RNA sequence: GGGAACGACUCGAGUAGAGUCGAAAACCGUAGGCGAUACUCCCCACCCGUGUAGUGGUACAUCGAUCUAAGCUUCGAAAGAGGCUUAGGGAGUACCACACACGGAGGUAUCGCCUAAACGGAAAGUUUGUCCCGUUCUUCGGAACGGGACAAACAAGUUAUAGAUGCUGUUCGCAGCAUCUAUAACAAAAGAAACAACAACAACAAC
Reactivity to 2A3 in 0.01 (KOAc 150mM, MgCl2 10mM, bicine 150mM(pH8.5), 24C), signal-to-noise 4, nucleotides 027 to 156: c010c000g020u010a010g000g000c010g000a000u000a000c030u120c040c070c010c010a020c000c000c000g010u010g010u040a300g000u030g020g000u010a010c020a230u250c060g080a020u030c030u000a000a010g000c000u000u000c000g050a090a080a060g000a000g010g000c000u000u000a000g000g000g000a010g010u000a010c000c000a000c000a000c000a000c000g000g000a000g000g000u010a000u000c000g020c000c000u020a030a020a000c010g020g030a160a070a040g010u000u000u000g000u010c000c020c000g000u000u000c000u030u060c200g050g000a000a000c000g010g030g030a000c000a000a000a000c000a000a000
Reactivity to DMS in 0.01 (KOAc 150mM, MgCl2 10mM, bicine 150mM(pH8.5), 24C), signal-to-noise 2, nucleotides 027 to 156: c020c000g030u000a050g020g020c000g000a010u000a000c020u000c070c040c050c160a300c220c020c010g100u000g030u000a090g120u010g000g020u000a030c000a250u000c160g010a090u010c000u000a000a010g010c020u020u040c010g010a090a110a300g000a010g000g010c000u000u000a000g010g000g010a040g020u000a000c000c000a030c020a020c010a020c000g000g000a070g020g000u000a010u000c000g020c000c010u010a010a010a030c040g000g020a120a070a110g020u000u000u000g010u000c020c030c000g020u000u010c000u000u000c300g050g000a030a030c000g000g000g020a000c000a000a010a010c000a060a160